This 207-nucleotide RNA was probed chemically with DMS and 2A3. For DMS the reverse transcriptase was MarathonRT. Conditions: 150 mM KOAc, 10 mM MgCl2 and 150 mM bicine (pH 8.5), 24 C. Source: RMDB library M2RFPK, as collected in RNAgym.

RNA sequence: GGGAACGACUCGAGUAGAGUCGAAAACGGAAGCAUUAAAACCAUUCGAGCUAGUCAAUGCGUGGCGUGUCUCUCCGCAGUGUGUUGGCGAAUGUAAAGAGUGACUAAGCAUGUAGUACCGAGGAUGAUAAGAGCAAUUCGUUCGCGAAUUGCUCAACCGUCUUAUGUAGUUCGCUACAUAAGACGGAAAAGAAACAACAACAACAAC
Reactivity to DMS in 0.01 (KOAc 150mM, MgCl2 10mM, bicine 150mM(pH8.5), 24C), signal-to-noise 4, nucleotides 027 to 156: c040g010g030a130a120g030c020a100u000u000a030a080a100a120c030c020a140u000u000c040g000a150g000c050u000a130g000u000c040a060a060u000g010c050g030u010g010g020c100g000u000g020u000c060u010c030u000c080c030g030c040a080g040u000g020u000g020u000u000g010g030c030g010a100a050u010g000u000a030a060a110g000a110g020u000g010a080c050u000a060a130g000c040a070u000g010u010a080g010u000a080c030c020g020a110g020g020a110u000g010a120u010a080a150g000a020g020c000a020a040u000u000c000g040u000u000c300g060c020g000a010a020u000u000g010c010u000c000a010a030
Reactivity to 2A3 in 0.01 (KOAc 150mM, MgCl2 10mM, bicine 150mM(pH8.5), 24C), signal-to-noise 7, nucleotides 027 to 156: c040g020g020a050a010g020c030a030u060u140a080a050a040a070c030c020a030u070u090c080g020a030g050c060u090a030g080u050c020a040a010u040g010c030g040u030g030g010c040g000u090g050u030c020u000c010u010c050c010g020c040a040g020u020g010u010g010u080u040g020g000c040g040a090a040u080g010u120a060a080a030g050a020g030u030g030a030c030u040a070a000g040c040a030u080g030u080a040g020u040a060c020c050g010a040g040g020a030u090g020a020u090a210a110g000a000g010c000a000a000u000u000c000g010u030u040c100g000c000g100a000a000u000u000g000c000u000c000a000a000